[RMDB]
RNA sequence: GGGAACGACUCGAGUAGAGUCGAAAACGUGUUAAGUCUUCUCGUUUAUUAGUGUUAGAUAAGGCGUUCAAAGGAUGCGAUUGUAGCUGAGGUAUUUAUGGACAGGAGCUCCUUGGCAGGUGGUACGCCAUGCUGGAACAUUCGUGUUCCAGCAUGGAAAAGAAACAACAACAACAAC
Reactivity to 2A3 in 0.01 (KOAc 150mM, MgCl2 10mM, bicine 150mM(pH8.5), 24C), signal-to-noise 2, nucleotides 027 to 126: c020g000u040g030u060u080a060a020g020u010c000u050u000c000u000c000g020u050u040u010a120u070u100a070g010u030g050u100u070a000g000a090u040a080a020g040g000c030g000u040u050c020a000a040a070g070g030a070u140g060c090g030a070u070u190g020u100a050g000c050u030g070a020g110g050u080a100u040u170u060a140u120g030g030a030c000a020g080g000a020g010c020u000c000c010u040u030g010g000c030a020g030g020u000g010g000u000a030c020g000
Reactivity to DMS in 0.01 (KOAc 150mM, MgCl2 10mM, bicine 150mM(pH8.5), 24C), signal-to-noise 3, nucleotides 027 to 126: c050g000u020g000u010u030a060a120g000u000c030u000u000c020u010c020g020u010u020u010a080u010u010a070g010u020g000u000u000a060g020a060u040a100a060g010g000c050g010u000u000c050a060a030a110g010g000a010u010g030c060g020a170u030u000g020u020a060g010c030u010g000a050g010g010u020a040u020u020u000a050u000g010g010a040c060a040g010g000a250g010c030u000c020c000u000u010g000g030c060a050g000g000u010g020g040u020a040c070g020